[RMDB]
This 177-nucleotide RNA was probed chemically with 2A3 and DMS. The 2A3 profile rests on 2,204 reads. The RNA was probed in 150 mM KOAc, 10 mM MgCl2 and 150 mM bicine (pH 8.5) at 24 C.
RNA sequence: GGGAACGACUCGAGUAGAGUCGAAAAUGGAGGGAUCCGCAUGAGGCUGGUUUUACAGAGCAGUGAACACUUCCUUCUCUUGACAGUGGAGGGAUCACAGGCUGCAGUAUUCUUGGCUUAUAUGGCCUUUCCCAGUGUACUUCGGUACACUGGGAAAAAAAGAAACAACAACAACAAC
Reactivity to 2A3 in 0.01 (KOAc 150mM, MgCl2 10mM, bicine 150mM(pH8.5), 24C), signal-to-noise 2, nucleotides 027 to 126: u140g010g000a030g020g040g000a030u040c020c020g030c040a050u080g020a020g010g020c010u010g010g000u000u070u000u000a000c060a030g110a010g040c000a000g030u010g090a100a030c030a050c050u070u040c000c000u040u030c010u010c000u080u230g130a090c070a050g050u060g050g020a030g000g000g000a020u020c060a050c050a070g040g000c000u020g010c020a000g000u020a060u020u060c050u030u030g030g000c000u030u060a060u040a030u300g020g000c000c010
Reactivity to DMS in 0.01 (KOAc 150mM, MgCl2 10mM, bicine 150mM(pH8.5), 24C), signal-to-noise 2, nucleotides 027 to 126: u040g030g000a010g030g000g000a050u000c000c050g000c080a070u010g000a090g000g010c010u000g000g010u010u020u000u030a080c030a070g000a080g000c020a100g000u010g020a110a090c170a180c270u030u000c000c020u060u000c010u000c030u000u000g010a140c240a090g030u000g040g000a000g000g010g000a030u000c060a010c180a100g000g000c020u010g030c060a090g030u000a020u000u030c050u020u010g000g000c000u000u010a110u040a050u030g020g020c010c020